[RMDB]
RNA sequence: GGGAACGACUCGAGUAGAGUCGAAAAGCCGAGGUUUUCCUGGCGGCCUAUCGCGAAGCCCAUCCGCAGGCCCGCGUGGCUCGCCGCGAAGUCGGCCGGGUACCGCUUCCGGCGGUCACCGAGGCCAUCAAAAUAGCUCAUUCGUGAGCUAUUUUGAAAAAGAAACAACAACAACAAC
Reactivity to DMS in 0.01 (KOAc 150mM, MgCl2 10mM, bicine 150mM(pH8.5), 24C), signal-to-noise 6, nucleotides 027 to 126: g020c020c010g010a120g000g000u000u000u000u000c020c020u000g010g010c020g010g010c020c050u010a070u010c090g010c030g010a100a120g010c020c010c030a140u010c090c060g010c130a150g010g010c000c010c010g010c220g010u000g010g000c000u020c030g010c010c000g010c240g010a020a020g010u010c030g020g000c030c040g010g000g010u010a130c000c010g000c010u000u000c050c030g000g010c000g010g000u000c020a010c000c000g000a130g020g010c000c010a070
Reactivity to 2A3 in 0.01 (KOAc 150mM, MgCl2 10mM, bicine 150mM(pH8.5), 24C), signal-to-noise 4, nucleotides 027 to 126: g000c010c020g020a060g060g020u070u130u160u170c020c010u030g070g030c020g010g020c000c020u150a160u150c080g000c030g030a050a030g030c030c020c010a060u070c040c040g050c100a070g010g000c000c010c010g010c050g000u010g000g030c090u100c180g000c000c000g010c080g000a010a020g200u300c070g010g030c020c080g160g000g030u080a070c010c000g010c000u010u020c000c020g000g000c000g000g000u000c000a000c000c000g010a110g000g000c000c000a010